[RMDB]
Source: RMDB library M2PK50, as collected in RNAgym. Chemical mapping of a 177-nucleotide RNA with DMS and 2A3. The RNA was probed in 150 mM KOAc, 10 mM MgCl2 and 150 mM bicine (pH 8.5) at 24 C.

RNA sequence: GGGAACGACUCGAGUAGAGUCGAAAAUACGUGACCUUCGGGUCACGUAACCGGCGUUCCCAAGUCAAAAUGAGAGACGCAAUCUCGACAGCGGCCUUUUCGUAUGAGUUGCUUUCGAGCAACUCAACCUAGGAGGGAAGUUCGCUUCCCUCCUAGGAAAAGAAACAACAACAACAAC
Reactivity to DMS in 0.01 (KOAc 150mM, MgCl2 10mM, bicine 150mM(pH8.5), 24C), signal-to-noise 2, nucleotides 027 to 126: u010a010c020g020u000g000a000c000c000u010u020c200g030g010g010u000c000a010c000g000u000a020a080c070c030g000g000c030g010u000u010c000c000c000a120a110g010u010c160a040a060a080a080u010g000a130g000a030g000a040c050g020c070a080a150u000c050u000c030g000a040c120a110g010c040g000g020c070c030u030u000u000u000c070g020u010a140u010g000a010g010u000u000g000c000u000u010u000c180g010a040g010c000a010a000c000u000c000a030a050
Reactivity to 2A3 in 0.01 (KOAc 150mM, MgCl2 10mM, bicine 150mM(pH8.5), 24C), signal-to-noise 2, nucleotides 027 to 126: u040a010c000g000u000g010a010c000c000u000u030c290g050g010g000u000c010a000c010g010u000a010a000c030c010g060g010c010g020u010u020c020c010c010a000a010g140u120c090a060a030a120a120u210g000a050g020a000g020a060c030g000c090a040a120u040c030u040c070g060a090c020a020g000c000g000g030c000c010u070u090u120u120c070g020u120a120u180g010a010g000u000u000g000c000u040u080u120c200g070a000g000c000a010a010c000u000c000a020a000